This 177-nucleotide RNA was probed chemically with DMS and 2A3. Source: RMDB library OK1LIB, as collected in RNAgym. For DMS, 1,033 sequencing reads were counted. The reactions ran in a buffer of 150 mM KOAc, 10 mM MgCl2 and 150 mM bicine (pH 8.5), at 24 C. For DMS the reverse transcriptase was MarathonRT.

RNA sequence: GGGAACGACUCGAGUAGAGUCGAAAAGCCUAAAAUUGAGUAUGGUCUCAAUCAGGUCACAUCGACUUGGGGGCAAGAAUGCUGCGGGUAUGUCAAUGAGAUUGACAUUAUUUGUGUCGCAGACACACUAGGCGUGCGUAUUCGUACGCACGCCUAGAAAAGAAACAACAACAACAAC
Reactivity to DMS in 0.01 (KOAc 150mM, MgCl2 10mM, bicine 150mM(pH8.5), 24C), signal-to-noise 2, nucleotides 027 to 126: g070c000c000u000a060a030a150a000u050u000g000a030g000u120a080u030g060g020u000c040u000c000a000a000u000c080a030g000g000u000c000a080c230a060u000c270g040a000c000u000u050g000g000g080g080g000c080a000a040g000a150a130u000g020c000u000g000c000g000g000g000u000a000u000g000u000c000a050a100u000g030a050g050a300u000u010g000a000c000a010u000u000a100u030u070u000g010u000g000u000c000g080c070a030g000a140c000a080c270a040
Reactivity to 2A3 in 0.01 (KOAc 150mM, MgCl2 10mM, bicine 150mM(pH8.5), 24C), signal-to-noise 2, nucleotides 027 to 126: g010c070c020u090a080a110a070a000u000u000g000a000g000u070a090u120g110g120u110c000u030c000a000a000u050c020a000g010g000u010c020a000c030a200u080c200g030a010c000u000u030g050g000g020g080g000c000a000a010g080a060a010u070g000c050u000g010c020g040g000g070u020a000u070g000u050c050a010a010u110g180a120g100a190u000u000g000a000c010a010u100u010a130u090u180u060g170u050g000u020c090g070c160a030g070a040c050a000c000a000